Record summary
An RNA of 177 nucleotides, treated with 2A3 and DMS and read out base by base. The RNA was probed in 150 mM KOAc, 10 mM MgCl2 and 150 mM bicine (pH 8.5) at 24 C. Values cover nucleotides 27 to 126. For DMS the reverse transcriptase was MarathonRT. 2A3 adducts were read by reverse transcription with SuperScript II with manganese.
[RMDB]
RNA sequence: GGGAACGACUCGAGUAGAGUCGAAAAGAAAGAUACAACUAUACAAGCCAGAGAGCCAGUCAGAGGGCGCUACCAUGCAAACUAGGGCUGGCUACUCUUGCACAGAAUCACAUCUCGAUAAUUGUCAAAUCAUAGGGGUUUUCGAACCCCUAUGAUUAAAAGAAACAACAACAACAAC
Reactivity to 2A3 in 0.01 (KOAc 150mM, MgCl2 10mM, bicine 150mM(pH8.5), 24C), signal-to-noise 3, nucleotides 027 to 126: g050a000a100a000g070a010u120a040c080a140a030c040u090a040u090a300c120a170a000g030c000c000a000g000a000g000a000g000c000c000a000g010u000c010a020g000a000g060g000g000c000g000c000u090a220c010c120a050u150g010c000a000a020a030c000u030a000g000g040g000c010u010g000g000c000u010a000c000u000c000u000u000g000c000a010c020a030g090a020a030u100c020a010c020a120u020c030u050c050g140a120u120a110a120u170u090g100u080c060a100
Reactivity to DMS in 0.01 (KOAc 150mM, MgCl2 10mM, bicine 150mM(pH8.5), 24C), signal-to-noise 4, nucleotides 027 to 126: g010a080a110a100g010a060u030a060c070a080a080c110u060a090u030a150c110a080a100g000c020c100a020g000a030g000a110g000c000c010a000g010u000c000a010g000a000g010g000g000c300g030c010u000a070c280c280a070u010g060c010a040a300a120c000u000a020g010g020g010c020u000g000g000c000u000a000c010u000c020u010u000g020c010a100c130a050g010a090a060u000c060a030c120a080u020c020u000c050g020a050u000a050a090u020u000g000u010c090a070